An RNA of 177 nucleotides, treated with DMS and 2A3 and read out base by base.

RNA sequence: GGGAACGACUCGAGUAGAGUCGAAAAUUGAAAAGAAAUUGUGCAUAGUUUGGAGACAACAUGUAGCGCACGCAUGUUGUGAGAAAUGCUUAACGCUGUGUGCGAGAUAUGGAUCGGAGCAUCAUUAAGUCGCAUCAUAGUUCGCUAUGAUGCGACUAAAAGAAACAACAACAACAAC
Reactivity to DMS in 0.01 (KOAc 150mM, MgCl2 10mM, bicine 150mM(pH8.5), 24C), signal-to-noise 2, nucleotides 027 to 126: u000u010g000a030a080a140a080g010a010a100a070u000u000g020u020g010c050a040u010a080g030u000u000u000g000g000a140g000a060c060a030a050c000a000u000g000u010a100g000c040g040c060a020c010g000c000a010u000g010u000u000g010u000g020a130g010a150a070a040u020g010c010u010u000a090a120c100g020c050u010g020u000g030u010g020c010g020a070g020a080u030a030u000g010g000a070u010c070g000g010a100g000c040a070u010c080a080u000u030a100
Reactivity to 2A3 in 0.01 (KOAc 150mM, MgCl2 10mM, bicine 150mM(pH8.5), 24C), signal-to-noise 1, nucleotides 027 to 126: u080u050g010a000a000a010a030g080a030a100a070u080u050g010u000g000c020a040u040a070g060u150u090u130g160g000a100g020a020c010a020a000c020a020u010g010u020a000g020c000g000c000a020c010g000c010a020u120g020u080u020g010u000g000a070g060a030a230a020u090g050c030u070u060a140a020c060g010c010u010g010u010g000u020g030c000g000a010g010a010u190a020u060g050g000a020u000c040g020g070a040g000c020a020u080c010a020u090u080a050

The reactions ran in a buffer of 150 mM KOAc, 10 mM MgCl2 and 150 mM bicine (pH 8.5), at 24 C. For 2A3 the reverse transcriptase was SuperScript II with manganese.